[RMDB]
RNA sequence: GGGAACGACUCGAGUAGAGUCGAAAAGGCUGCGUAUCACUCUAGGGUACGUGAUAAUGCGAUAUAAGAAGCACUGGUACAUGCCGGCAGGGACAGUUAAGAGAUGGCCGCAGUCUCGUGUCCCUGCAAAAGGAGUUCUCGUUCGCGAGAACUCCAAGAUUAAACGUCAGUUCGCUGACGUUUAAUCAAAAGAAACAACAACAACAAC
Reactivity to 2A3 in 0.01 (KOAc 150mM, MgCl2 10mM, bicine 150mM(pH8.5), 24C), signal-to-noise 5, nucleotides 027 to 156: g050g000c020u030g010c040g020u030a010u010c020a050c150u110c130u240a120g040g000g070u030a020c030g000u020g040a050u130a140a040u110g030c040g040a030u030a020u040a200a070g120a060a000g030c020a030c080u060g040g020u090a080c050a040u140g050c030c010g070g000c020a000g000g000g000a000c000a030g040u140u150a140a050g010a000g010a010u040g080g020c060c030g050c070a030g020u010c010u000c000g020u030g010u000c010c000c000u000g000c000a010a000a000a020g000g000a000g000u000u000c010u000c000g020u060u040c130g000c010g110a000g000a000a000c000u000c000c000a000a000
Reactivity to DMS in 0.01 (KOAc 150mM, MgCl2 10mM, bicine 150mM(pH8.5), 24C), signal-to-noise 2, nucleotides 027 to 156: g030g000c010u000g040c020g000u000a080u000c020a070c090u010c100u000a210g030g020g030u000a020c080g030u000g010a090u000a050a060u000g020c000g010a120u000a130u000a100a130g000a150a160g000c060a050c010u010g020g060u000a060c070a170u000g000c020c030g010g030c000a020g010g030g000a020c000a060g020u000u010a050a110g000a070g000a070u000g020g020c040c120g020c080a260g000u000c020u000c000g000u000g010u000c010c000c000u000g000c040a010a040a080a100g000g010a020g000u000u000c000u010c000g040u000u000c260g000c000g010a010g000a000a010c010u000c000c010a000a060
Chemical mapping of a 207-nucleotide RNA with 2A3 and DMS.
Conditions: 150 mM KOAc, 10 mM MgCl2 and 150 mM bicine (pH 8.5), 24 C.
2A3 is a SHAPE reagent: it acylates the 2'-hydroxyl of flexible nucleotides of all four kinds.